[RMDB]
RNA sequence: GGGAACGACUCGAGUAGAGUCGAAAAUAAAACUAACAUUGAGAGUUGUAGGGAUCUCCGAGGAUUAAACUGCUGCUAAAUGAGGUUCUCGAUGUUGACGUACAUAUUUAGUAGUACAGCUGGUAUCCGACUGCAUACCGUUCGCGGUAUGCAGUCGAAAAGAAACAACAACAACAAC
Reactivity to 2A3 in 0.01 (KOAc 150mM, MgCl2 10mM, bicine 150mM(pH8.5), 24C), signal-to-noise 1, nucleotides 027 to 126: u080a030a050a010a010c210u160a090a010c000a010u150u120g020a030g000a000g120u010u070g100u120a060g050g000g000a010u000c010u100c130c000g030a110g020g010a000u070u070a000a240a000c000u000g000c000u000g020c000u000a120a120a090u130g020a300g020g000u150u000c000u000c020g070a060u200g010u000u030g000a000c100g010u050a010c000a000u110a070u060u110u010a140g120u000a000g000u000a120c110a000g050c000u000g000g020u090a270u060c000
Reactivity to DMS in 0.01 (KOAc 150mM, MgCl2 10mM, bicine 150mM(pH8.5), 24C), signal-to-noise 1, nucleotides 027 to 126: u000a020a000a080a120c090u050a040a080c140a030u000u000g060a000g000a150g000u000u000g000u000a090g000g000g000a050u020c020u000c000c000g000a000g000g060a080u000u060a010a080a130c070u010g000c040u000g000c060u010a000a060a070u000g000a140g050g000u020u020c010u000c010g000a120u040g000u060u000g000a000c120g000u000a300c040a150u000a110u000u060u060a130g000u000a020g000u080a060c240a180g000c000u000g020g000u010a070u060c060

Chemical mapping of a 177-nucleotide RNA with 2A3 and DMS. Values cover nucleotides 27 to 126.